[RMDB]
RNA sequence: GGGAACGACUCGAGUAGAGUCGAAAAACGAACGUCUGCUGUGCCCUGUAGGAUGGGUGGGUGUUGGCGGAUGAAGAAAGGGGUAGCAGUUCGCCCAGAGCACAGUGAAGUCGCGGCAUGAAUGCGCGACAAAAGGGCAAUUCGUUGCCCUUUUGUCAAAAGAAACAACAACAACAAC
Reactivity to 2A3 in 0.01 (KOAc 150mM, MgCl2 10mM, bicine 150mM(pH8.5), 24C), signal-to-noise 8, nucleotides 027 to 126: a000c050g050a060a010c040g060u030c040u070g000c000u010g010u040g040c000c000c010u020g060u080a060g030g070a110u090g010g040g070u220g040g020g000u150g030u140u080g020g000c020g000g030a030u090g070a060a100g130a090a080a030g050g000g010g030u060a050g020c050a020g010u050u030c010g010c010c000c010a010g010a000g000c010a010c010a030g010u020g120a110a010g050u080c030g010c030g080g000c040a020u090g060a130a040u150g030c070g000c030
Reactivity to DMS in 0.01 (KOAc 150mM, MgCl2 10mM, bicine 150mM(pH8.5), 24C), signal-to-noise 9, nucleotides 027 to 126: a110c070g010a080a080c090g010u000c050u000g020c010u000g010u000g010c010c010c000u000g010u010a080g000g010a150u010g000g000g000u010g000g000g010u010g010u010u010g010g000c050g020g000a060u010g010a110a110g010a080a090a110g000g000g000g010u000a100g010c140a110g000u000u000c040g000c010c020c010a060g000a070g010c040a020c030a040g010u000g010a080a070g010u000c020g010c030g010g010c050a100u000g010a080a100u000g010c050g010c100